[RMDB]
RNA sequence: GGGAACGACUCGAGUAGAGUCGAAAAAAGGGCGGCGGGCCGGCAUCGAAACGCGGCCUUGCUCGCGGCAGGGGGCGGGCGGAAUGUUCCGGAAUGGCCCGGAACGGCCUGGUUCGGUCAGCUUGGAUCAUGGUGCUAAUUUCGAUUAGCACCAUGAAAAAGAAACAACAACAACAAC
Reactivity to DMS in 0.01 (KOAc 150mM, MgCl2 10mM, bicine 150mM(pH8.5), 24C), signal-to-noise 2, nucleotides 027 to 126: a140a070g010g010g000c040g020g000c030g010g000g020c000c040g040g030c050a070u000c090g010a060a120a140c160g000c000g010g010c000c060u000u000g020c010u000c080g030c050g020g000c080a060g020g030g000g000g010c060g000g000g000c070g000g000a040a120u010g020u000u000c000c010g000g020a190a170u010g030g040c130c010c010g010g010a010a010c030g010g010c050c020u010g020g010u010u010c060g010g010u000c030a140g010c050u000u000g010g000a270